[RMDB]
RNA sequence: GGGAACGACUCGAGUAGAGUCGAAAAGAUAUGGAUUAAACUCCCCACCUUGGUAGAACUAUUCGGAAACGAACGAAUUCUAUGCAAGAGGUUUAAUCCUAAGUCAAAAGCCUUGUUCGCAAGGCAAUCCAAUAAUGGUGUUCGCACCAUUAUUGGAAAAAGAAACAACAACAACAAC
Reactivity to 2A3 in 0.01 (KOAc 150mM, MgCl2 10mM, bicine 150mM(pH8.5), 24C), signal-to-noise 1, nucleotides 027 to 126: g090a040u230a130u300g000g000a000u020u030a030a000a000c000u160c060c030c000c000a020c000c010u000u000g010g000u020a000g010a020a000c060u050a100u000u010c010g020g100a080a050a060c030g060a050a010c000g070a170a280u000u010c010u000a010u080g300c000a000a000g000a020g020g010u000u000u010a000a010u010c000c000u030a110a010g120u130c110a060a130a030a010g030c030c000u000u010g020u080u180c300g000c030a000a000g000g000c000a010a010
Reactivity to DMS in 0.01 (KOAc 150mM, MgCl2 10mM, bicine 150mM(pH8.5), 24C), signal-to-noise 3, nucleotides 027 to 126: g010a120u010a180u010g010g020a010u000u010a000a010a010c020u000c180c020c000c060a300c090c010u000u010g020g010u010a000g010a000a020c060u000a270u000u000c010g000g000a130a070a160c010g020a020a000c070g020a050a060u000u000c000u000a000u000g020c010a020a010g000a110g000g000u000u000u000a000a010u000c000c000u010a070a100g000u040c120a080a040a120a150g020c000c000u000u000g000u000u010c230g010c000a010a000g030g000c000a040a020